[RMDB]
RNA sequence: GGGAACGACUCGAGUAGAGUCGAAAAGGUUGGGUCUUGCGCAAUGGGAACCUGUGAACCAUGUCAGGUCCGGAAGGAAGCAGCAUUAAUCAGUGCUUCUCAUGUGCCGCGAGGUUGCCUGGCCCGAGCUAACUAUCAAGGUAACGCAGGUGAUUGCCUCAGUGUUAAUGUUCGCAUUAACACUGAGAAAAGAAACAACAACAACAAC
Reactivity to 2A3 in 0.01 (KOAc 150mM, MgCl2 10mM, bicine 150mM(pH8.5), 24C), signal-to-noise 4, nucleotides 027 to 156: g040g000u020u030g030g000g030u130c000u000u010g010c020g000c010a000a020u030g000g000g040a020a030c000c000u000g010u010g020a060a070c100c050a050u010g040u060c030a000g000g030u000c000c020g100g060a130a100g020g000a010a000g010c010a000g010c000a020u030u080a030a100u070c010a000g020u010g080c100u010u000c000u010c000a040u120g110u080g250c110c020g000c020g020a010g020g040u160u140g010c000c000u000g000g000c000c010c000g020a030g030c040u110a050a050c010u020a050u260c060a110a060g090g010u070a070a040c050g010c040a020g080g020u080g070a140u070u130g010c000
Reactivity to DMS in 0.01 (KOAc 150mM, MgCl2 10mM, bicine 150mM(pH8.5), 24C), signal-to-noise 2, nucleotides 027 to 156: g000g020u010u000g010g030g030u000c000u010u010g000c000g010c040a080a060u000g010g000g010a020a030c040c010u040g010u000g000a200a220c140c110a050u000g040u010c040a300g000g000u000c010c000g050g010a150a140g010g000a080a000g030c040a250g000c030a110u000u000a140a190u000c040a100g030u010g000c110u000u000c000u030c020a050u020g010u010g030c100c050g050c000g000a060g020g000u000u000g010c000c010u000g000g020c000c000c010g000a100g010c030u000a100a080c060u010a100u000c080a080a070g000g020u000a030a060c070g000c050a060g010g000u020g010a130u000u000g010c050